Structure probing data (2A3 and DMS) for a 177-nucleotide construct.
RNA sequence: GGGAACGACUCGAGUAGAGUCGAAAACGGGCAGUGUCUAGCCAGGCCUUGACAAGCUAGCCGGAGGAGCGCCUAGGAACCCGAGCCGGAGCUCAGCGAGCGCAGCCUGCAGCUCCCGCCUCGCCGUAGCAUGUCCAGUUUUCGAACUGGACAUGCUAAAAGAAACAACAACAACAAC
Reactivity to 2A3 in 0.01 (KOAc 150mM, MgCl2 10mM, bicine 150mM(pH8.5), 24C), signal-to-noise 2, nucleotides 027 to 126: c010g010g060g010c020a040g070u020g040u130c050u060a050g040c020c030a060g000g030c010c020u050u130g060a050c010a050a030g040c020u050a010g010c000c000g010g010a030g000g050a020g040c030g010c000c010u030a030g010g070a090a050c000c000c020g000a000g020c020c000g000g000a000g000c010u020c030a010g030c040g040a070g050c080g000c100a010g010c020c000u060g000c020a010g010c000u000c000c010c000g010c010c000u030c010g000c010c010g060u000
Reactivity to DMS in 0.01 (KOAc 150mM, MgCl2 10mM, bicine 150mM(pH8.5), 24C), signal-to-noise 2, nucleotides 027 to 126: c060g040g000g020c090a010g050u050g000u020c030u010a090g000c040c080a070g000g020c020c080u000u000g000a070c240a090a140g000c000u000a070g030c060c020g020g000a180g000g000a220g000c080g000c040c060u000a170g010g000a060a180c000c020c060g030a060g000c060c250g030g050a090g040c000u000c020a030g000c070g000a140g000c020g000c150a020g000c030c010u000g060c080a050g000c000u010c020c080c080g000c090c050u000c030g000c000c000g000u010